[RMDB]
RNA sequence: GGGAACGACUCGAGUAGAGUCGAAAAUUAUCGGUGGAAGAGAAAAACCUUGUGUUCGAUCACUUGGUCAAUCUGGCACCAAAGAAGGAACCAGAAUGGGUGACGAUUGCUGAGAUUCUGGGAAUUGAUCGUGGGCAAUUAAUUGGUACCGCAACGACGACCCAAAAUUAUUCGUAAUUUUGGGUCGAAAAGAAACAACAACAACAAC
Reactivity to DMS in 0.01 (KOAc 150mM, MgCl2 10mM, bicine 150mM(pH8.5), 24C), signal-to-noise 1, nucleotides 027 to 156: u010u010a120u020c020g070g070u000g010g000a210a080g000a170g010a000a060a170a040a050c000c020u000u000g000u010g000u000u000c220g000a130u000c020a030c010u000u000g020g020u000c000a090a270u000c000u010g010g000c020a020c020c110a060a060a090g010a100a090g020g010a280a170c000c010a110g000a050a070u020g000g000g000u000g000a020c070g000a110u000u030g010c060u010g010a200g020a070u000u010c010u010g040g010g000a070a100u000u000g000a070u010c040g020u000g020g000g040c020a040a090u000u000a030a150u000u000g000g020u000a050c000c010g000c060a060a080c060g010a170
Reactivity to 2A3 in 0.01 (KOAc 150mM, MgCl2 10mM, bicine 150mM(pH8.5), 24C), signal-to-noise 3, nucleotides 027 to 156: u170u070a140u090c070g000g010u000g030g040a090a030g040a010g000a180a070a000a050a010c010c000u050u040g010u010g050u030u180c130g120a300u140c030a000c000u030u050g010g010u040c030a010a080u040c030u020g080g000c000a030c030c010a060a060a010g060a050a020g080g000a020a020c010c010a000g000a130a050u080g120g000g020u070g020a030c070g090a090u030u110g010c050u050g050a060g000a130u050u040c030u030g000g040g080a030a080u070u120g090a080u050c020g040u070g030g050g010c030a020a010u060u050a050a050u080u060g030g000u060a100c060c060g000c050a040a060c050g120a010